Overview:
Conditions: 150 mM KOAc, 10 mM MgCl2 and 150 mM bicine (pH 8.5), 24 C. Structure probing data (DMS and 2A3) for a 207-nucleotide construct.

[RMDB]
RNA sequence: GGGAACGACUCGAGUAGAGUCGAAAAAGCGUGCCGGUGCAGGCAAGAGACCACCGUAAGCGUCGUUGCGACCAAAUAAGCGCCGAUUCACAUCAGCGCGACUACGCUCUCGCUGCCUAAGCGACGGCUAGUCUGUCAGACCGGGAACGCCCUCGGCCAGAUAUUUAAGGUUCGCCUUAAAUAUCUGAAAAGAAACAACAACAACAAC
Reactivity to DMS in 0.01 (KOAc 150mM, MgCl2 10mM, bicine 150mM(pH8.5), 24C), signal-to-noise 2, nucleotides 027 to 156: a060g000c030g020u010g020c070c020g030g000u000g020c050a130g010g000c000a090a060g000a170g010a130c050c010a090c120c020g020u000a070a080g010c060g020u000c030g020u020u000g020c020g000a160c050c060a070a070a060u000a110a180g030c000g010c010c020g000a100u000u000c300a090c090a300u010c010a010g000c020g020c000g000a070c020u000a050c060g010c000u000c060u000c000g020c040u010g000c110c090u010a110a110g030c030g000a020c040g010g000c020u010a040g010u000c030u020g000u020c040a150g000a140c010c000g000g000g020a070a100c080g000c030c030c020u000c030g010g000c070
Reactivity to 2A3 in 0.01 (KOAc 150mM, MgCl2 10mM, bicine 150mM(pH8.5), 24C), signal-to-noise 5, nucleotides 027 to 156: a000g050c040g020u050g050c040c000g000g010u010g030c030a020g020g000c010a030a000g050a000g000a040c010c030a010c010c020g130u130a040a030g000c010g010u010c000g000u010u020g020c000g050a080c040c090a120a050a080u180a200a050g030c020g000c030c020g030a020u110u140c100a070c030a200u050c030a030g020c000g000c000g010a000c000u020a010c050g010c010u020c010u020c000g010c010u060g060c030c130u160a100a010g000c000g010a010c020g010g000c010u010a020g020u000c020u040g050u060c030a030g030a120c000c000g010g000g030a080a060c030g040c030c020c000u020c010g000g000c010
The data come from the RNA Mapping Database (RMDB), library ARCHII.
For DMS, 4,832 sequencing reads were counted.